[RMDB]
Structure probing data (DMS and 2A3) for a 177-nucleotide construct.
RNA sequence: GGGAACGACUCGAGUAGAGUCGAAAAGACCAUUCUGAUGGGCACAUACCGAUAACGAAAACAACAACGGUGCCGACGGUAUGUGCGUCGGCGUAGCCUCACGGGCACUGCCCACCCGUGCACCAAGAUCCUCACUAGUAUUCGUACUAGUGAGGAUAAAAGAAACAACAACAACAAC
Reactivity to DMS in 0.01 (KOAc 150mM, MgCl2 10mM, bicine 150mM(pH8.5), 24C), signal-to-noise 7, nucleotides 027 to 126: g000a200c030c020a090u010u040c080u000g030a060u010g000g000g000c000a030c030a030u010a020c010c010g020a130u050a100a100c130g000a070a060a100a050c200a110a140c230a080a110c180g010g010u010g010c020c010g020a070c010g000g000u000a010u000g000u020g000c010g000u010c030g000g000c030g030u020a100g000c030c010u010c050a030c030g010g000g000c090a030c060u010g010c010c010c030a150c020c010c010g030u000g010c250a060c070c060a110a090g000
Reactivity to 2A3 in 0.01 (KOAc 150mM, MgCl2 10mM, bicine 150mM(pH8.5), 24C), signal-to-noise 9, nucleotides 027 to 126: g060a040c010c010a060u150u060c080u210g210a150u120g010g060g000c010a010c000a020u060a030c040c010g110a100u110a190a080c120g080a100a110a030a040c100a050a030c020a070a030c100g050g090u250g030c010c010g010a010c000g000g040u050a040u080g030u040g020c000g000u020c010g000g000c030g040u070a030g030c010c010u060c020a030c020g000g000g020c080a030c100u100g010c000c000c000a020c000c010c000g010u030g020c010a030c010c020a040a020g080